[RMDB]
RNA sequence: GGGAACGACUCGAGUAGAGUCGAAAACGGUUCCGGUGCCGGGAUGAACAAGCUGCAAGCGCGGCUCUGGCUGGAAAAGGCCGCACAGCAGCAGGAUGCGGAUGCCAUCGCCUGGUUGGAGAGCGCACCUCACUAUUAUCUUCGGAUAAUAGUGAGGAAAAGAAACAACAACAACAAC
Reactivity to 2A3 in 0.01 (KOAc 150mM, MgCl2 10mM, bicine 150mM(pH8.5), 24C), signal-to-noise 3, nucleotides 027 to 126: c010g030g020u070u020c020c000g010g080u050g010c020c030g030g040g010a080u110g060a110a060c050a160a100g010c000u010g000c030a110a180g040c020g020c020g070g000c030u020c020u050g110g000c050u070g090g030a060a040a020a030g040g000c000c000g030c020a020c020a020g000c000a000g020c010a020g070g000a030u060g000c040g110g080a110u140g020c040c000a040u020c010g020c010c010u020g000g010u060u080g060g020a090g000a010g030c040g010c020a060
Reactivity to DMS in 0.01 (KOAc 150mM, MgCl2 10mM, bicine 150mM(pH8.5), 24C), signal-to-noise 5, nucleotides 027 to 126: c100g020g000u000u000c010c030g000g020u010g020c020c020g030g010g020a090u010g010a100a150c180a100a080g010c010u000g010c010a120a120g030c060g020c000g000g010c000u000c030u000g010g010c080u010g010g000a080a080a120a120g000g020c000c010g020c010a040c030a270g010c010a020g010c020a060g010g000a080u000g010c040g000g010a120u010g010c050c010a070u000c050g010c040c020u000g010g010u000u000g000g020a080g020a110g010c040g030c130a140